[RMDB]
RNA sequence: GGGAACGACUCGAGUAGAGUCGAAAAUCCUCACGUUUCGACGUGAGGAGAACUCUAGCAAGGGAAGGGAACCCACGGGAAGGGCUCCCAAGGCGAUCUCAACAAGGGCCAAAUUCGUUUGGCCCAACAAAUUCAGCUCUUUCGAGAGCUGAAUUUGAAAAGAAACAACAACAACAAC
Reactivity to DMS in 0.01 (KOAc 150mM, MgCl2 10mM, bicine 150mM(pH8.5), 24C), signal-to-noise 2, nucleotides 027 to 126: u000c000c000u020c010a000c010g020u000u010u050c300g030a000c010g000u000g000a040g040g000a010g020a030a070c030u000c020u000a000g000c090a050a220g000g000g010a060a110g000g000g020a050a050c000c040c020a080c260g020g000g020a190a100g000g000g000c050u000c010c000c000a040a060g030g010c040g000a160u000c030u000c050a050a100c300a090a070g020g000g000c000c000a000a010a020u000u010c150g020u000u000u010g030g010c020c000c000a020a020
Reactivity to 2A3 in 0.01 (KOAc 150mM, MgCl2 10mM, bicine 150mM(pH8.5), 24C), signal-to-noise 1, nucleotides 027 to 126: u020c000c020u000c000a000c000g020u030u040u110c200g080a010c000g000u010g000a000g000g000a010g040a030a010c020u000c030u050a040g120c030a100a040g100g020g070a110a070g010g000g030a040a030c000c020c020a030c060g090g030g060a110a090g010g030g000c010u020c040c020c000a000a000g030g000c010g060a070u010c030u030c020a000a160c000a060a180g000g000g000c000c020a020a020a030u090u060c120g060u010u000u030g000g020c000c020c000a000a000
An RNA of 177 nucleotides, treated with DMS and 2A3 and read out base by base. Reactivities are rounded to 0.1 and cut off at 0 and 3. For DMS the reverse transcriptase was MarathonRT. The RNA was probed in 150 mM KOAc, 10 mM MgCl2 and 150 mM bicine (pH 8.5) at 24 C. 2A3 adducts were read by reverse transcription with SuperScript II with manganese.